RNA sequence: GGGAACGACUCGAGUAGAGUCGAAAAGCAUGCCGAGGAACGGUUUGCCUCGAUAAAAGCCGUAAAAUAAUAGCUGCAAAUAAUAAACAACACUACGCUUUAGCAGCUUAAAAAACUGUAUAAAGCCCUUUCUUCUCAGCCUCCUCUCUUAGGACGACACAGAUAUCAAGUUCGCUUGAUAUCUGUGAAAAGAAACAACAACAACAAC
Reactivity to 2A3 in 0.01 (KOAc 150mM, MgCl2 10mM, bicine 150mM(pH8.5), 24C), signal-to-noise 1, nucleotides 027 to 156: g030c020a000u130g070c020c010g010a010g050g020a090a020c010g040g030u030u080u140g070c010c000u080c030g080a050u150a100a070a010a000g030c000c000g050u020a010a130a030a020u130a060a070u080a060g020c010u050g000c030a090a060a030u150a080a060u170a120a150a060c040a110a000c010a040c110u180a040c130g000c020u000u060u000a020g000c000a000g000c000u030u040a010a010a000a010a000a010c050u060g000u020a180u020a260a020a030g000c000c060c000u030u040u010c010u050u000c000u010c030a010g030c000c000u010c000c010u040c000u020c010u020u050a060g010g010a010c000g010a010
This 207-nucleotide RNA was probed chemically with 2A3. Values cover nucleotides 27 to 156. The reactions ran in a buffer of 150 mM KOAc, 10 mM MgCl2 and 150 mM bicine (pH 8.5), at 24 C. It was measured as part of the RMDB library RSTRND. For 2A3, 856 sequencing reads were counted.